Notes
Conditions: 150 mM KOAc, 10 mM MgCl2 and 150 mM bicine (pH 8.5), 24 C. Structure probing data (2A3 and DMS) for a 177-nucleotide construct. High 2A3 reactivity points to a flexible backbone, as in loops and unpaired stretches. 2A3 adducts were read by reverse transcription with SuperScript II with manganese.
RNA sequence: GGGAACGACUCGAGUAGAGUCGAAAAAGGAGUCCUUUCGAGGACUCCUACUAGUGGCGCCGACCACUAAAAAACAACGGCCAAACAAAAAUGUCAGCAAAAAACGCCUAGCUUUCGAGCUAGGCAACAAAGCAUAACUAUUCGUAGUUAUGCUUUGAAAAGAAACAACAACAACAAC
Reactivity to 2A3 in 0.01 (KOAc 150mM, MgCl2 10mM, bicine 150mM(pH8.5), 24C), signal-to-noise 3, nucleotides 027 to 126: a000g020g010a010g010u000c000c000u040u020u060c130g080a020g000g000a000c000u000c000c000u000a000c000u010a010g000u000g000g000c040g000c020c000g250a300c020c040a040c010u170a060a140a010a010a000a010c050a000a020c020g010g000c090c020a060a170a020c010a020a140a140a100a040u190g080u260c080a070g130c090a220a160a040a040a070a070c130g020c000c000u000a000g000c020u130u080u120c220g020a000g000c000u000a020g000g000c010a000a000
Reactivity to DMS in 0.01 (KOAc 150mM, MgCl2 10mM, bicine 150mM(pH8.5), 24C), signal-to-noise 4, nucleotides 027 to 126: a180g010g010a030g010u000c000c000u000u000u010c140g030a010g020g000a010c000u000c000c000u010a010c020u000a000g020u000g000g000c020g010c030c010g000a170c000c000a000c000u000a000a030a020a030a010a020c130a020a040c010g010g000c040c300a090a050a100c080a040a050a080a080a070u010g010u020c100a090g000c120a010a060a060a120a060a080c180g010c000c000u000a000g010c000u010u000u010c150g010a010g010c000u000a000g010g000c000a010a020